[RMDB]
This 177-nucleotide RNA was probed chemically with 2A3 and DMS.
For 2A3, 1,531 sequencing reads were counted.
The reactions ran in a buffer of 150 mM KOAc, 10 mM MgCl2 and 150 mM bicine (pH 8.5), at 24 C.

RNA sequence: GGGAACGACUCGAGUAGAGUCGAAAAGAAGUUGUGUUCGCACAACUUCAAAAGCUAGUAGGUACUGGGCAAGUAGUACCUAGUAGUAGCCCGUUCAAGUUAAAAUCAACCUCUUCGGAGGUUGAAAACUAAACUAUCCGUUCGCGGAUAGUUUAGUAAAAGAAACAACAACAACAAC
Reactivity to 2A3 in 0.01 (KOAc 150mM, MgCl2 10mM, bicine 150mM(pH8.5), 24C), signal-to-noise 2, nucleotides 027 to 126: g000a010a010g000u010u010g000u000g000u050u110c150g070c110a000c000a010a000c000u000u000c000a000a000a000a000g010c000u010a010g060u010a020g160g010u030a000c020u030g080g120g030c170a190a060g110u030a010g000u000a090c020c000u010a000g000u000a000g000u000a010g040c000c000c020g020u160u160c120a100a030g030u080u150a000a060a050a110u010c000a000a000c000c000u030c030u070u160c270g110g030a000g090g040u000u010g000a000a000a000
Reactivity to DMS in 0.01 (KOAc 150mM, MgCl2 10mM, bicine 150mM(pH8.5), 24C), signal-to-noise 3, nucleotides 027 to 126: g000a030a010g010u000u000g020u010g010u000u010c240g030c020a000c000a010a000c000u000u000c000a020a040a140a270g000c000u000a000g000u000a010g000g020u000a000c000u010g010g010g020c300a100a220g000u010a010g020u000a000c010c000u000a010g010u000a010g000u000a110g000c000c000c000g000u010u010c200a070a110g000u000u000a030a110a080a170u000c000a020a000c000c000u000c000u000u020c160g000g000a000g020g010u010u010g000a000a020a070